Chemical mapping of a 177-nucleotide RNA with 2A3 and DMS.
2A3 adducts were read by reverse transcription with SuperScript II with manganese.
For DMS the reverse transcriptase was MarathonRT.

RNA sequence: GGGAACGACUCGAGUAGAGUCGAAAACUGCCUCCGUUUUGUGUUUGGUUCUUUUAUACCAAAUAAACAAGUUUUAUGGCAAGAAGCUCAUAAUAAACAUACAUGUGCCUUUAAUCAAUCUGUAAUCGUCGAAUCGAAGAUUCGUCUUCGAUUCGACAAAAGAAACAACAACAACAAC
Reactivity to 2A3 in 0.01 (KOAc 150mM, MgCl2 10mM, bicine 150mM(pH8.5), 24C), signal-to-noise 8, nucleotides 027 to 126: c030u030g010c000c010u080c020c050g050u050u030u090u080g050u000g020u000u000u010g010g000u040u100c050u070u300u070u060a140u060a050c010c000a010a010a010u120a050a080a020c040a020a010g010u060u090u070u090a060u070g000g010c010a010a060g060a070a010g080c030u030c120a020u040a140a010u100a060a150a030c070a050u190a040c040a030u110g020u040g060c010c000u110u040u090a090a120u090c090a030a030u040c040u080g120u180a070a100u080c080
Reactivity to DMS in 0.01 (KOAc 150mM, MgCl2 10mM, bicine 150mM(pH8.5), 24C), signal-to-noise 3, nucleotides 027 to 126: c070u010g010c040c020u020c020c050g020u000u000u000u000g020u000g000u000u000u000g000g010u000u000c180u000u040u010u000a080u030a080c020c030a040a010a030u020a070a060a090c100a060a040g010u000u020u000u000a040u010g010g000c050a090a050g000a040a100g030c090u010c000a030u000a060a100u010a100a080a090c090a120u000a090c100a030u010g010u010g000c040c040u020u000u020a060a090u020c110a060a090u020c040u020g010u000a040a090u020c160